The record gives the reactivity of an RNA of 177 nucleotides to DMS and 2A3. Reactivities are rounded to 0.1 and cut off at 0 and 3. DMS adducts were read by reverse transcription with MarathonRT. The 2A3 profile rests on 1,018 reads.

RNA sequence: GGGAACGACUCGAGUAGAGUCGAAAACGGGUGCUAGGCAUUUAGCCACUUUUGUGUACAUUAAACAUCUCAGAAGCUCUUAAGCACAGGAUGUUCCAAGAUCUAUUUGGUGGACACAGGGGCCAAAGACAGAUAUCGGGUUCGCCCGAUAUCUGUCAAAAGAAACAACAACAACAAC
Reactivity to DMS in 0.01 (KOAc 150mM, MgCl2 10mM, bicine 150mM(pH8.5), 24C), signal-to-noise 1, nucleotides 027 to 126: c130g030g010g000u000g000c090u000a060g000g030c060a170u000u010u000a130g010c090c030a210c050u010u000u010u010g010u000g020u000a050c030a030u010u000a030a060a030c120a020u000c000u010c160a060g000a080a040g020c010u010c260u000u020a070a090g000c190a130c120a110g010g010a060u010g010u010u010c000c040a060a050g000a070u000c180u010a150u010u000u010g000g010u010g000g010a020c000a000c020a100g000g000g000g010c090c070a010a040a080
Reactivity to 2A3 in 0.01 (KOAc 150mM, MgCl2 10mM, bicine 150mM(pH8.5), 24C), signal-to-noise 2, nucleotides 027 to 126: c000g020g030g020u020g010c040u050a060g080g040c000a050u050u160u200a050g000c070c000a060c060u140u150u080u060g060u000g000u030a040c050a000u060u240a160a010a000c010a020u040c020u050c080a150g030a230a020g010c020u010c050u240u190a200a030g010c010a010c020a060g040g000a020u070g000u070u000c030c000a030a010g020a140u060c070u160a120u180u080u070g060g010u010g000g000a020c000a010c000a060g060g000g020g000c060c040a010a030a000